[RMDB]
RNA sequence: GGGAACGACUCGAGUAGAGUCGAAAACACAGGCGACUUAAUCGGAGAGCGGUAACACGCGAGGAAGAUGAAAUUAUUACAUCAGUAGACUCGAGAUUACUACAACUUGCGUUGCUAUCUCAAAUAAUCGAAACUAAUUAUUCGUAAUUAGUUUCGAAAAAGAAACAACAACAACAAC
Reactivity to DMS in 0.01 (KOAc 150mM, MgCl2 10mM, bicine 150mM(pH8.5), 24C), signal-to-noise 7, nucleotides 027 to 126: c080a100c130a100g000g020c040g020a070c100u000u010a070a090u000c050g010g010a080g010a130g020c080g000g000u000a050a050c100a080c050g000c010g010a040g020g000a130a110g000a030u000g000a080a060a130u000u020a100u010u000a120c020a010u000c010a090g010u010a070g010a110c050u000c070g000a080g010a130u000u010a060c050u000a040c060a090a080c030u000u000g010c060g000u010u000g010c080u000a070u010c010u010c030a070a070a090u000a070a100
Reactivity to 2A3 in 0.01 (KOAc 150mM, MgCl2 10mM, bicine 150mM(pH8.5), 24C), signal-to-noise 8, nucleotides 027 to 126: c070a000c020a030g070g020c020g030a050c050u130u180a070a070u150c050g060g000a020g000a010g050c070g020g000u030a040a020c030a000c080g000c010g000a010g030g030a060a120g010a030u040g030a050a100a060u300u220a120u110u150a100c000a020u010c010a010g070u050a020g030a050c030u010c110g060a070g020a110u100u140a050c020u010a020c010a090a030c020u010u040g000c010g020u020u030g010c020u030a050u070c010u010c010a070a120a070u190a060a100

About this RNA
An RNA of 177 nucleotides, treated with DMS and 2A3 and read out base by base. The data come from the RNA Mapping Database (RMDB), library M2PK90.